The record gives the reactivity of an RNA of 170 nucleotides to 2A3 and DMS. DMS adducts were read by reverse transcription with MarathonRT. 2A3 adducts were read by reverse transcription with SuperScript II with manganese. The data come from the RNA Mapping Database (RMDB), library 15KLIB. 2A3 is a SHAPE reagent: it acylates the 2'-hydroxyl of flexible nucleotides of all four kinds.
RNA sequence: GGGAACGACUCGAGUAGAGUCGAAAACUCAGUGCUCUUACUCUUUCCUAUAAAGAGGAGACUGCUGGACUCGCCGCCCGAGCCCGAGCAUGGGCCCCAGUUCCGAACGAAGAGACCGCCGGGGAAGACAGUCUGAAGUUCGCUUCAGACAAAAGAAACAACAACAACAAC
Reactivity to 2A3 in 0.01 (KOAc 150mM, MgCl2 10mM, bicine 150mM(pH8.5), 24C), signal-to-noise 9, nucleotides 027 to 129: c030u020c020a020g020u030g080c020u010c010u050u170a300c000u060c010u050u080u060c050c070u180a140u200a250a050a000g020a010g020g000a000g020a020c010u040g020c030u020g010g010a040c020u030c110g020c010c020g010c000c000c010g020a020g020c000c020c010g020a030g040c060a060u080g000g000g000c000c000c000c010a050g010u120u040c020c020g010a030a030c020g010a020a020g020a010g020a060c010c010g000c000c000g010g000g000g000a000a010g020a010c010a020
Reactivity to DMS in 0.01 (KOAc 150mM, MgCl2 10mM, bicine 150mM(pH8.5), 24C), signal-to-noise 9, nucleotides 027 to 129: c060u010c030a050g020u030g050c180u000c020u020u050a200c050u020c020u010u010u010c090c150u050a100u110a120a000a030g000a000g000g000a010g020a020c030u000g030c090u010g000g000a040c060u010c080g000c040c020g020c040c040c000g030a070g040c090c020c040g000a050g000c150a080u010g010g000g050c060c020c030c040a090g020u040u000c040c020g010a080a090c070g010a050a060g030a080g000a080c100c110g010c020c000g020g000g010g020a010a010g000a010c050a070